[RMDB]
RNA sequence: GGGAACGACUCGAGUAGAGUCGAAAAGAUAUGGACGUAUUAAGGGAGCCAUUAAUCGGAAACGAUUACUGGCGACGAUCUUACUGUACGUCCUAAGUCAAAACCUAGUCCCUUCGGGGACUAGGAAGCAUUUAUUCUCGUUCGCGAGAAUAAAUGCAAAAGAAACAACAACAACAAC
Reactivity to DMS in 0.01 (KOAc 150mM, MgCl2 10mM, bicine 150mM(pH8.5), 24C), signal-to-noise 1, nucleotides 027 to 126: g000a000u000a210u010g000g000a020c010g010u000a010u000u010a010a000g030g000g010a050g000c000c000a020u010u000a000a000u000c000g000g000a040a100a110c010g010a030u000u000a000c150u000g020g010c000g010a070c300g010a050u000c020u010u000a020c300u020g000u000a030c000g000u000c000c000u000a010a020g010u000c010a110a080a100a230c020c000u000a000g000u000c000c000c000u000u000c290g010g000g010g000a010c000u000a000g010g010a010a140